[RMDB]
RNA sequence: GGGAACGACUCGAGUAGAGUCGAAAACAAAUCCCUGCUCAGUGUGUCCGUGACCCUGUGGGAUUUUGUUUGUCAAAUACCCCCUGUAAUGUCUGUCAAUAUUGGAUUGGAUAUGGGUGCAAUUGUGCAACCGCUCCUUGUUCGCAAGGAGCGGUUGAAAAGAAACAACAACAACAAC
Reactivity to DMS in 0.01 (KOAc 150mM, MgCl2 10mM, bicine 150mM(pH8.5), 24C), signal-to-noise 1, nucleotides 027 to 126: c030a020a030a040u000c020c000c010u000g020c260u010c000a010g010u010g020u020g050u000c050c250g040u020g000a040c000c040c010u000g000u010g000g020g000a110u000u000u000u000g020u000u020u000g010u010c100a000a100a060u000a260c020c000c010c000c030u010g010u030a070a080u010g010u000c000u000g000u000c010a050a100u000a140u000u010g010g000a050u010u010g000g010a040u000a050u000g010g000g000u000g000c120a110a060u000u010g000u000g000